[RMDB]
Chemical mapping of a 177-nucleotide RNA with 2A3 and DMS. Source: RMDB library TTRDEL, as collected in RNAgym. The 2A3 profile rests on 3,476 reads. 2A3 adducts were read by reverse transcription with SuperScript II with manganese.

RNA sequence: GGGAACGACUCGAGUAGAGUCGAAAAGAUAUGGAGAACUACUUGCACCAACGCUGACUAUGUCGGAAACGACAUAGGUGGAGUUGGAGCAAGCUCCUAAGUCAAAAGCAAGCCUUCGGGCUUGCAAGUGGUAUACCCUGUUCGCAGGGUAUACCACAAAAGAAACAACAACAACAAC
Reactivity to 2A3 in 0.01 (KOAc 150mM, MgCl2 10mM, bicine 150mM(pH8.5), 24C), signal-to-noise 1, nucleotides 027 to 126: g040a030u090a030u210g020g030a020g000a060a050c080u180a030c000u300u030g020c000a010c020c000a000a010c020g000c060u050g010a020c000u000a010u000g000u020c010g010g050a100a070a050c000g010a000c010a000u000a010g030g020u010g000g020a060g000u010u010g000g000a010g010c000a000a020g000c040u000c000c000u000a120a050g080u030c060a060a030a000a130g030c010a000a010g000c010c000u100u160c300g080g010g010c000u000u000g000c000a010a000
Reactivity to DMS in 0.01 (KOAc 150mM, MgCl2 10mM, bicine 150mM(pH8.5), 24C), signal-to-noise 2, nucleotides 027 to 126: g000a050u000a300u000g000g000a010g000a110a030c050u010a300c000u000u000g020c000a120c000c000a010a010c000g010c000u000g000a030c000u000a000u010g010u000c000g000g000a050a060a240c000g010a010c000a010u020a000g000g000u010g010g000a010g010u000u000g030g020a030g030c010a010a000g000c010u000c000c000u000a080a160g000u010c020a040a120a110a090g000c000a010a020g000c000c020u000u000c200g040g000g010c000u000u000g000c000a010a010